[RMDB]
Conditions: 150 mM KOAc, 10 mM MgCl2 and 150 mM bicine (pH 8.5), 24 C. Chemical mapping of a 177-nucleotide RNA with DMS and 2A3. 2A3 adducts were read by reverse transcription with SuperScript II with manganese. DMS adducts were read by reverse transcription with MarathonRT.

RNA sequence: GGGAACGACUCGAGUAGAGUCGAAAAGAGGAAUCGUUUGAAAUCAUCGUAGUAAUCGCGCGAAAAUCGCGUGAAAUAAUCAGAGGAAUCGUUUGAAAUCAUCGUAGUAAUCGCGCGAAAAUCGCGUGAGAAGCGAUCUAUUCGUAGAUCGCUUCUCAAAAGAAACAACAACAACAAC
Reactivity to DMS in 0.01 (KOAc 150mM, MgCl2 10mM, bicine 150mM(pH8.5), 24C), signal-to-noise 3, nucleotides 027 to 126: g010a100g000g020a060a080u010c050g000u000u000u010g000a060a100a110u000c080a110u010c030g000u000a070g030u000a130a110u030c080g000c000g040c000g000a010a050a090a140u010c030g000c020g000u000g010a000a050a050u040a100a140u020c060a110g000a070g000g000a050a150u000c010g000u050u040u040g000a030a040a190u020c060a050u020c030g000u010a080g000u020a080a120u000c010g000c010g000c000g000a010a010a070a180u000c030g000c010g090u020
Reactivity to 2A3 in 0.01 (KOAc 150mM, MgCl2 10mM, bicine 150mM(pH8.5), 24C), signal-to-noise 5, nucleotides 027 to 126: g120a010g010g100a030a110u080c030g040u040u100u140g110a090a100a030u100c080a020u050c030g040u010a030g030u030a100a090u060c050g020c000g000c000g000a000a040a050a040u050c000g000c000g000u010g010a030a020a020u140a010a020u080c060a030g050a070g080g080a060a070u080c050g100u060u110u180g070a060a040a030u060c050a030u040c030g020u020a050g000u010a010a120u030c010g010c010g000c000g020a000a010a010a010u040c010g000c000g000u020